RNA sequence: GGGAACGACUCGAGUAGAGUCGAAAACAUCAGUCGUUCGCGACUGAUGAAACGUGCAAGCGCUGCACGAAAAUGUCGAUCGAAUACCGAUCGACAAGCGCUAAAGAUAGGCCUUCGGGCCUAUCAAGAACUCAUUGAUGUUCGCAUCAAUGAGUUCAAAAGAAACAACAACAACAAC
Reactivity to 2A3 in 0.01 (KOAc 150mM, MgCl2 10mM, bicine 150mM(pH8.5), 24C), signal-to-noise 5, nucleotides 027 to 126: c010a010u000c000a000g010u000c000g040u060u110c240g000c010g090a010c000u000g000a000u000g000a010a010a000c000g010u000g000c010a080a030g000c000g000c010u010g000c020a000c020g040a120a060a010a040u090g000u010c000g000a000u000c000g000a060a040u120a300c140c010g000a000u000c000g000a000c000a000a000g000c000g000c000u010a030a010a010g000a000u010a000g010g010c000c040u020u110c260g060g010g000c000c000u010a000u000c000a000a000
Reactivity to DMS in 0.01 (KOAc 150mM, MgCl2 10mM, bicine 150mM(pH8.5), 24C), signal-to-noise 3, nucleotides 027 to 126: c010a020u000c000a020g010u000c000g030u000u000c190g030c000g020a010c000u000g000a010u000g000a010a090a140c010g000u010g000c000a110a040g000c000g000c000u000g000c000a010c000g010a040a070a050a050u000g020u000c000g010a010u000c000g010a230a200u000a140c220c020g010a000u000c000g010a000c000a010a010g000c010g020c010u000a100a160a120g000a010u000a000g030g000c000c000u010u010c220g040g010g010c000c000u010a000u000c000a050a110
The record gives the reactivity of an RNA of 177 nucleotides to 2A3 and DMS. For DMS, 3,623 sequencing reads were counted. Conditions: 150 mM KOAc, 10 mM MgCl2 and 150 mM bicine (pH 8.5), 24 C. Values cover nucleotides 27 to 126. 2A3 adducts were read by reverse transcription with SuperScript II with manganese.